Structure probing data (2A3 and DMS) for a 177-nucleotide construct. For 2A3 the reverse transcriptase was SuperScript II with manganese. The DMS profile rests on 15,797 reads. The reactions ran in a buffer of 150 mM KOAc, 10 mM MgCl2 and 150 mM bicine (pH 8.5), at 24 C.

RNA sequence: GGGAACGACUCGAGUAGAGUCGAAAAAUGUUGUACCGAGUAAAGUCAAGAAAGGCGAUGCCUGUUAUGUCGAGGAAAGAGCGAUGCCGAAUAGCAUUUAUGAACAUAUCAAAGUGCUGCCGCCUUACAUUUACUACCUGUUCGCAGGUAGUAAAUGAAAAGAAACAACAACAACAAC
Reactivity to 2A3 in 0.01 (KOAc 150mM, MgCl2 10mM, bicine 150mM(pH8.5), 24C), signal-to-noise 5, nucleotides 027 to 126: a000u090g010u070u010g040u050a090c050c040g010a000g030u090a030a170a060g050u050c080a020a050g050a150a070a010g080g000c030g030a030u060g030c000c020u020g020u030u020a040u030g040u030c040g050a050g020g090a150a050a030g040a010g040c050g020a020u020g020c020c030g160a110a060u140a070g010c030a030u020u040u060a200u180g040a040a010c030a070u060a010u090c040a120a090a050g050u120g070c010u030g020c020c010g000c010c000u010u020a010
Reactivity to DMS in 0.01 (KOAc 150mM, MgCl2 10mM, bicine 150mM(pH8.5), 24C), signal-to-noise 9, nucleotides 027 to 126: a100u010g010u000u000g010u000a130c070c030g010a130g010u010a060a060a110g010u000c090a060a110g010a100a050a050g010g010c020g010a150u000g010c010c020u000g000u000u000a030u000g010u010c050g010a130g000g000a050a070a080g010a110g010c100g000a040u000g010c030c050g010a070a070u000a070g010c010a020u000u000u010a100u020g000a060a070c130a050u000a050u000c040a040a070a080g020u010g010c000u000g020c120c040g000c030c030u000u000a160
The data come from the RNA Mapping Database (RMDB), library OK2TRN.